[RMDB]
RNA sequence: GGGAACGACUCGAGUAGAGUCGAAAAGAUAUGGAAGCGUACCCAUGGCAACAGCUACAGGACUCGGAAACGAGUCUGUAGACAUGCCAUGGACGCUUCCUAAGUCAAAGGCGUCUUCGGACGCCAAUCGUAUUAGUGCCUUCGGGCACUAAUACGAAAAAGAAACAACAACAACAAC
Reactivity to DMS in 0.01 (KOAc 150mM, MgCl2 10mM, bicine 150mM(pH8.5), 24C), signal-to-noise 2, nucleotides 027 to 126: g010a060u000a300u020g000g000a000a010g020c000g000u010a120c280c020c000a010u000g000g000c010a050a070c300a190g010c000u000a000c000a010g020g000a050c000u000c000g000g000a140a060a170c010g010a000g030u000c010u000g010u000a000g000a070c070a210u000g020c000c010a000u000g000g000a010c000g000c000u000u000c000c000u000a020a090g010u000c010a060a060a180g000g020c000g020u000c000u000u040c130g010g000a010c020g020c000c010a000a010
Reactivity to 2A3 in 0.01 (KOAc 150mM, MgCl2 10mM, bicine 150mM(pH8.5), 24C), signal-to-noise 1, nucleotides 027 to 126: g010a040u070a070u200g000g010a000a010g010c030g000u060a160c000c020c000a000u010g020g020c010a080a060c050a300g060c010u010a000c010a050g280g110a190c000u010c010g030g080a080a080a070c010g010a010g010u000c000u000g000u020a000g000a060c020a050u080g000c010c010a000u000g010g010a000c000g020c000u000u000c000c000u010a020a010g010u000c010a070a040a150g030g000c000g010u000c010u080u130c300g140g000a000c000g040c000c010a010a010